[RMDB]
RNA sequence: GGGAACGACUCGAGUAGAGUCGAAAAGGACGUUCUUUCACUGACAACCUCUAGGGGCGGGCAGGCAGGCAGGAGGGCGGAUUCUCUCCUUCCUUCAUGUGUCCACAGACGCAAUCAAACGAGGAAAAGCACUCUCAAUAUUCGUAUUGAGAGUGCUAAAAGAAACAACAACAACAAC
Reactivity to 2A3 in 0.01 (KOAc 150mM, MgCl2 10mM, bicine 150mM(pH8.5), 24C), signal-to-noise 2, nucleotides 027 to 126: g060g020a000c040g040u050u050c000u020u150u030c080a030c100u050g090a070c050a100a090c040c000u000c030u090a040g030g030g050g020c030g070g030g000c000a010g010g010c010a010g050g000c020a000g020g010a020g000g040g000c030g070g090a140u250u040c010u000c000u020c010c000u010u010c000c000u000u030c060a090u070g020u020g030u110c010c000a030c010a060g030a020c040g000c050a000a090u050c030a070a080a080c100g000a080g020g000a010a090a000
Reactivity to DMS in 0.01 (KOAc 150mM, MgCl2 10mM, bicine 150mM(pH8.5), 24C), signal-to-noise 3, nucleotides 027 to 126: g000g000a120c100g020u000u000c020u000u000u000c060a070c120u010g010a060c130a080a130c050c060u000c060u010a160g010g010g000g010c110g010g000g000c000a050g000g000c120a030g000g000c050a030g000g000a040g010g020g010c300g010g010a150u010u000c080u000c040u020c010c020u000u000c000c000u000u000c070a100u010g000u000g010u010c020c160a080c180a050g010a090c070g010c040a040a060u000c090a040a110a100c180g000a050g020g000a050a070a060